[RMDB]
RNA sequence: GGGAACGACUCGAGUAGAGUCGAAAAGUAUUGGUGGUGCGUUUUUGGAGCGGUUCCAUGCUGGCAAGGCUAUUUACGUGCCGGGUCCUACUUGGGGUAACCACGGAGCUGUGUUCAGGGACUGUGGGACAUCCCAAAUAUUCGUAUUUGGGAUGUCAAAAGAAACAACAACAACAAC
Reactivity to 2A3 in 0.01 (KOAc 150mM, MgCl2 10mM, bicine 150mM(pH8.5), 24C), signal-to-noise 2, nucleotides 027 to 126: g080u070a100u150u180g020g000u030g020g020u050g040c040g020u010u030u020u080u070g090g010a050g050c040g020g010u050u000c030c010a040u100g030c030u010g010g020c030a070a070g040g000c020u040a090u120u170u090a070c060g010u040g020c010c000g030g010g000u030c030c010u060a120c040u050u090g000g000g000g020u050a070a030c030c020a010c030g010g000a030g030c030u010g020u030g050u220u110c020a020g020g010g020a050c020u030g020u040g100g020
Reactivity to DMS in 0.01 (KOAc 150mM, MgCl2 10mM, bicine 150mM(pH8.5), 24C), signal-to-noise 5, nucleotides 027 to 126: g010u000a090u010u010g010g010u000g010g020u000g010c070g010u000u000u000u010u000g010g010a100g020c060g010g010u000u000c050c030a060u000g010c050u000g010g010c070a090a090g000g010c050u000a080u020u010u010a080c150g020u010g010c020c020g010g010g000u000c020c020u000a060c100u000u010g000g000g010g010u010a070a160c060c020a050c060g000g010a140g010c040u010g010u000g010u010u010c050a050g000g000g000a100c050u000g010u000g000g020
Chemical mapping of a 177-nucleotide RNA with 2A3 and DMS. Reactivities are given for positions 27 through 126. Values are in units of 0.01, from 0 to 300, in steps of 10. The DMS profile rests on 11,137 reads. The 2A3 profile rests on 3,899 reads.